[RMDB]
Chemical mapping of a 177-nucleotide RNA with DMS and 2A3.
Values cover nucleotides 27 to 126.
In probing experiments dimethyl sulfate is read out at A N1 and C N3, which are open when not base-paired.
RNA sequence: GGGAACGACUCGAGUAGAGUCGAAAAACGAGCCGAAAGGCGGGCCUAGCGAACCACCCUGGCCUUUUGGUGAGGCCGGGUGACGACAGAAAAGCUACCCCAGGGAUAACAGAGUUGUCCCCGGCGAAGUAAAUACAGUCUUCGGACUGUAUUUACUAAAAGAAACAACAACAACAAC
Reactivity to DMS in 0.01 (KOAc 150mM, MgCl2 10mM, bicine 150mM(pH8.5), 24C), signal-to-noise 6, nucleotides 027 to 126: a100c040g000a190g020c010c000g010a060a070a120g010g000c020g000g000g010c060c050u000a040g000c010g000a120a090c090c030a040c020c000c000u030g060g000c000c000u000u000u030u020g020g020u060g010a020g010g010c000c010g000g000g010u010g000a040c110g010a100c140a110g000a080a080a080a170g010c010u000a060c060c000c000c140a120g000g000g010a040u000a030a040c040a210g020a170g000u010u000g010u010c000c000c000c010g000g000c040g010a080
Reactivity to 2A3 in 0.01 (KOAc 150mM, MgCl2 10mM, bicine 150mM(pH8.5), 24C), signal-to-noise 8, nucleotides 027 to 126: a000c030g010a020g000c010c000g060a090a040a020g070g010c040g020g010g000c020c040u020a020g010c010g040a030a030c020c000a010c010c010c070u110g090g000c020c000u030u030u030u080g300g030u300g010a010g010g000c010c000g000g000g000u010g010a020c030g020a010c010a020g200a040a090a010a000g010c000u030a040c020c000c000c010a030g020g000g010a010u030a060a040c070a100g160a050g250u020u020g000u010c010c000c000c000g010g000c010g010a050